RNA sequence: GGGAACGACUCGAGUAGAGUCGAAAAGGUCAUCCUUCACAGGAUCGUGUGGAAGUCCUGCUCGGGGCGGAACCAUUAAAACCAUUCGAGCUAGUCAAUGCGUGGCGUGUCUCUCCGCAGCGUGUUGUGUAUGAGAGUGGAUUCGUCCACUCUCAAAGAUUUAGUUGUCGUUCGCGACAACUAAAUCAAAAGAAACAACAACAACAAC
Reactivity to DMS in 0.01 (KOAc 150mM, MgCl2 10mM, bicine 150mM(pH8.5), 24C), signal-to-noise 1, nucleotides 027 to 156: g000g010u010c050a070u010c010c010u000u040c220a210c210a120g030g010a040u000c020g000u020g010u000g000g020a200a110g010u000c020c030u010g000c030u020c050g030g000g020g000c070g040g000a120a180c050c010a100u010u020a080a130a070a060c060c030a170u000u010c030g000a160g030c000u000a100g000u000c010a040a030u020g080c030g020u010g000g060c020g030u010g000u000c040u000c010u000c090c040g000c010a080g000c040g000u020g030u010u010g040u000g020u000a130u000g000a010g010a010g060u000g030g000a070u000u000c280g070u000c020c000a010c000u000c000u010c000a000a020a110
Reactivity to 2A3 in 0.01 (KOAc 150mM, MgCl2 10mM, bicine 150mM(pH8.5), 24C), signal-to-noise 4, nucleotides 027 to 156: g090g040u110c020a060u110c020c010u120u190c090a060c040a040g170g010a150u130c120g030u100g020u090g160g050a070a060g020u020c010c000u010g010c020u010c000g000g010g030g020c030g000g030a030a000c000c000a020u050u110a020a100a010a050c050c030a050u090u090c080g030a030g020c070u090a050g140u100c050a040a010u030g040c010g070u060g010g000c030g000u080g040u040c030u010c000u020c090c010g040c030a070g000c020g000u010g010u010u010g020u010g050u050a090u150g000a000g000a000g000u000g010g000a010u010u040c060g040u000c000c020a000c000u000c010u000c000a000a000a000
The record gives the reactivity of an RNA of 207 nucleotides to DMS and 2A3. The RNA was probed in 150 mM KOAc, 10 mM MgCl2 and 150 mM bicine (pH 8.5) at 24 C. It was measured as part of the RMDB library M2RFPK. For 2A3 the reverse transcriptase was SuperScript II with manganese. DMS adducts were read by reverse transcription with MarathonRT. In probing experiments dimethyl sulfate is read out at A N1 and C N3, which are open when not base-paired. Values are in units of 0.01, from 0 to 300, in steps of 10. The 2A3 profile rests on 2,362 reads.